An RNA of 207 nucleotides, treated with 2A3 and read out base by base. The 2A3 profile rests on 1,062 reads.
[RMDB]
RNA sequence: GGGAACGACUCGAGUAGAGUCGAAAAAGGUCUUUCGAGACCUAUGGCGGGGUCAGAGCUUUGAUCUCCUGGAGAGCAUCGAUCCUGAAGCCUCCACGGGGGAGCUCUCGGGAGGGAGCUCUGACGGAGGCACCCACGUAGCUCGGUUCGCCGAGAACAUGCACCCUGAAUUCGUUCAGGGUGCAUGAAAAGAAACAACAACAACAAC
Reactivity to 2A3 in 0.01 (KOAc 150mM, MgCl2 10mM, bicine 150mM(pH8.5), 24C), signal-to-noise 2, nucleotides 027 to 156: a010g020g000u020c020u040u060u060c120g040a040g000a010c010c010u030a120u020g040g000c040g000g010g040g000u000c010a010g000a000g020c050u300u300u080g050a060u040c010u010c010c020u130g260g040a010g000a000g000c010a050u300c040g010a050u030c000c010u030g010a120a080g030c000c000u000c010c000a000c020g000g000g000g020g030a000g000c000u000c000u010c000g010g000g000a000g000g000g010a000g000c010u000c010u010g000a000c000g000g000a010g040g020c020a030c010c000c010a040c080g090u090a020g030c010u000c010g010g020u060u060c200g010c040c010g050a000g080a020a030
Description: The data come from the RNA Mapping Database (RMDB), library RNAMAK. The RNA was probed in 150 mM KOAc, 10 mM MgCl2 and 150 mM bicine (pH 8.5) at 24 C.